Structure probing data (2A3) for a 207-nucleotide construct.
It was measured as part of the RMDB library RNAMAK.
For 2A3, 1,537 sequencing reads were counted.
RNA sequence: GGGAACGACUCGAGUAGAGUCGAAAAUCCUAAGUCGCACGGGAGCGUGUCCUGCUGCUUUGAUCUACAUCGGAAACGAUGUAGGGAGCAGCAGAGACACGCAUCGAUCGUGCGAUAUGGAAAAACCGGAUAUGCUGGUUCGCCAGCAUAUCCGGAACAGAGAUGUUUUCUUCGGAAAACAUCUCUGAAAAGAAACAACAACAACAAC
Reactivity to 2A3 in 0.01 (KOAc 150mM, MgCl2 10mM, bicine 150mM(pH8.5), 24C), signal-to-noise 1, nucleotides 027 to 156: u010c010c010u050a070a030g010u000c000g000c000a010c000g020g000g000a010g020c000g040u000g000u010c000c000u010g010c010u000g010c000u230u100u040g120a110u030c000u010a000c000a000u000c010g000g030a100a060a060c030g000a020u010g000u000a000g010g000g000a000g030c000a000g000c030a000g010a020g000a000c000a010c000g010c000a000u000c000g050a130u010c000g000u000g010c000g010a000u010a040u040g030g030a130a020a050a030a100c000c000g000g000a000u010a000u000g000c000u000g050g000u050u110c270g050c040c000a010g000c000a000u000a000u000c020c000g000g010a000a000
The RNA was probed in 150 mM KOAc, 10 mM MgCl2 and 150 mM bicine (pH 8.5) at 24 C.